[RMDB]
RNA sequence: GGGAACGACUCGAGUAGAGUCGAAAAUUGGGCUUCUCUCCUUUGCGCGGAGACGCAUGAGAACCUCGAUAAGCGCAAGCUUACCGAAACUCAUGUGCAGGCUUUGAAAGCCCGGACCGCAAUAUUCCCUCAACUAUGAGUUCGCUCAUAGUUGAGGAAAAGAAACAACAACAACAAC
Reactivity to DMS in 0.01 (KOAc 150mM, MgCl2 10mM, bicine 150mM(pH8.5), 24C), signal-to-noise 4, nucleotides 027 to 126: u020u030g000g010g010c050u010u000c030u000c020u000c010c010u010u030u040g000c170g020c300g000g020a010g000a030c010g000c000a000u000g000a000g010a050a090c300c060u000c010g000a010u000a020a000g000c000g000c300a120a180g010c000u010u000a010c030c000g000a010a090a110c000u000c000a010u020g000u000g000c070a080g000g030c070u000u040u020g010a240a060a050g010c000c000c000g010g010a060c100c050g000c120a070a060u020a120u000u010c020
Reactivity to 2A3 in 0.01 (KOAc 150mM, MgCl2 10mM, bicine 150mM(pH8.5), 24C), signal-to-noise 8, nucleotides 027 to 126: u070u030g010g010g020c040u060u000c020u020c010u020c030c040u070u140u240g150c180g020c060g020g000a010g000a010c000g000c000a000u000g000a000g010a050a050c030c040u000c000g010a010u000a010a000g000c020g010c110a080a040g000c010u000u000a010c010c000g010a080a030a010c000u000c000a010u000g000u000g000c000a000g050g040c030u160u140u180g130a150a030a020g000c000c000c000g000g060a030c010c010g020c070a020a030u080a120u160u100c010